[RMDB]
RNA sequence: GGGAACGACUCGAGUAGAGUCGAAAAGGCACUAUCUUCGGAUAGUGCCAAAACGGGAAAAGGGCCUCCCGAAAAGAAAAGAUCGAAACGAUCAAAAGGCCGAAAUCUCCCGGUUCGCCGGGAGAAAGUUACUUACAAAGUUCGCUUUGUAAGUAACAAAAGAAACAACAACAACAAC
Reactivity to 2A3 in 0.01 (KOAc 150mM, MgCl2 10mM, bicine 150mM(pH8.5), 24C), signal-to-noise 1, nucleotides 027 to 126: g010g000c000a000c010u010a010u030c000u030u030c060g000g000a010u000a010g000u000g040c000c000a000a000a000a000c020g000g000g000a040a100a100a170g030g000g000c000c000u010c020c010c000g020a020a150a000a000g050a020a120a000a010g000a000u000c010g060a280a240a140c080g010a000u000c020a000a040a000a070g000g000c010c000g000a010a010a010u000c000u000c000c000c000g010g020u010u010c160g040c020c000g010g020g010a000g000a000a000a000
Reactivity to DMS in 0.01 (KOAc 150mM, MgCl2 10mM, bicine 150mM(pH8.5), 24C), signal-to-noise 3, nucleotides 027 to 126: g010g020c000a010c000u000a000u000c000u000u030c180g050g000a010u000a020g010u000g020c000c010a000a010a040a190c020g010g000g000a130a050a080a130g010g020g030c000c010u010c010c010c000g010a080a030a160a160g010a080a130a070a130g000a000u000c010g000a060a110a090c110g000a000u000c010a040a050a140a050g000g000c000c000g000a030a100a130u000c000u000c000c000c010g010g020u000u020c180g050c000c000g030g040g000a000g010a000a010a100